[RMDB]
RNA sequence: GGGAACGACUCGAGUAGAGUCGAAAAGAUAUGGACGCAACAACAGCCCAUCUGGGUCGGAAACGACCCUGGGACAUGUUGAUGUCCUAAGUCAAAAGAUAACGAGCAGUUCGCUGCUCGUUAUCAAGGUGAGAUCUAGGUUCGCCUAGAUCUCACCAAAAGAAACAACAACAACAAC
Reactivity to DMS in 0.01 (KOAc 150mM, MgCl2 10mM, bicine 150mM(pH8.5), 24C), signal-to-noise 1, nucleotides 027 to 126: g000a050u000a300u000g020g000a030c020g010c040a030a030c010a010a090c300a080g000c030c030c000a150u010c190u010g020g000g010u010c000g000g000a200a060a270c020g010a000c010c000c000u020g020g010g010a010c070a110u000g000u000u000g000a030u000g020u000c000c000u000a060a110g010u000c000a060a110a150a150g000a010u000a000a000c000g010a000g020c000a010g010u000u000c270g010c010u000g020c000u000c000g000u000u000a000u000c000a040a010
Reactivity to 2A3 in 0.01 (KOAc 150mM, MgCl2 10mM, bicine 150mM(pH8.5), 24C), signal-to-noise 2, nucleotides 027 to 126: g000a020u050a040u090g000g010a000c020g010c050a040a000c020a000a030c040a190g150c010c000c000a060u080c120u160g000g000g020u020c000g000g000a050a070a040c010g000a000c020c000c000u000g000g020g040a100c090a250u060g000u020u000g080a230u160g020u080c000c020u010a050a030g070u060c030a020a020a020a180g000a000u000a010a010c000g000a010g060c010a010g000u040u240c260g120c220u000g000c000u010c000g010u010u000a000u000c000a000a010